This 177-nucleotide RNA was probed chemically with 2A3. It was measured as part of the RMDB library OK1LIB.
RNA sequence: GGGAACGACUCGAGUAGAGUCGAAAAAGAUGGGUAGCUGCACACUGGAACACUCAUCAGCAUUGGCUAUUUUUCGCAAGCAUGGCACACGACUUGGUUUGCACAGUUUCGUUGCAGGAAUGUGUGCGACGAGGUCAGCAUUCGUGCUGACCUCGUCAAAAGAAACAACAACAACAAC
Reactivity to 2A3 in 0.01 (KOAc 150mM, MgCl2 10mM, bicine 150mM(pH8.5), 24C), signal-to-noise 2, nucleotides 027 to 126: a020g080a040u070g000g000g060u090a010g010c000u000g000c050a040c000a000c040u000g000g050a080a000c000a030c040u080c040a050u000c000a010g040c040a080u030u210g240g000c050u140a290u000u070u010u040u040c040g050c040a010a020g000c130a000u080g070g000c010a040c000a000c070g080a020c020u050u070g050g000u150u100u110g030c020a040c010a040g090u080u100u180c170g090u280u120g030c080a020g000g000a060a050u250g080u000g000u000g030c000